[RMDB]
RNA sequence: GGGAACGACUCGAGUAGAGUCGAAAAGUGCCUCGUCGGCCCGGCAUGCCAACCUGACCCGAAGUUCAAGGUGGUUUCUCUGGCCUUCCAGAGAGAUGCGCGUCGGAAGAACCGACGAACAAACCUUAAAACAAAACGACGUUCGCGUCGUUUUGAAGGAAGAUCAUUGGUUCGCCAAUGAUCUUCCAAAAGAAACAACAACAACAAC
Reactivity to 2A3 in 0.01 (KOAc 150mM, MgCl2 10mM, bicine 150mM(pH8.5), 24C), signal-to-noise 1, nucleotides 027 to 156: g020u020g060c060c010u020c010g000u000c010g000g050c000c000c020g020g000c040a040u120g060c000c010a140a070c040c010u050g010a060c050c000c080g160a130a030g070u080u060c080a110a000g000g000u020g000g010u050u060u000c000u010c000u000g040g000c020c000u170u200c020c000a010g000a000g000a000g000a080u120g060c030g010c030g010u000c000g000g000a100a040g010a060a100c040c000g010a000c010g020a080a030c020a010a090a100c010c060u130u270a030a180a070a000c000a010a010a010a010c000g000a000c000g010u080u110c220g000c000g090u000c010g000u000u000u000u000g000a020a000
Structure probing data (2A3) for a 207-nucleotide construct. 2A3 adducts were read by reverse transcription with SuperScript II with manganese. The 2A3 profile rests on 586 reads. Conditions: 150 mM KOAc, 10 mM MgCl2 and 150 mM bicine (pH 8.5), 24 C.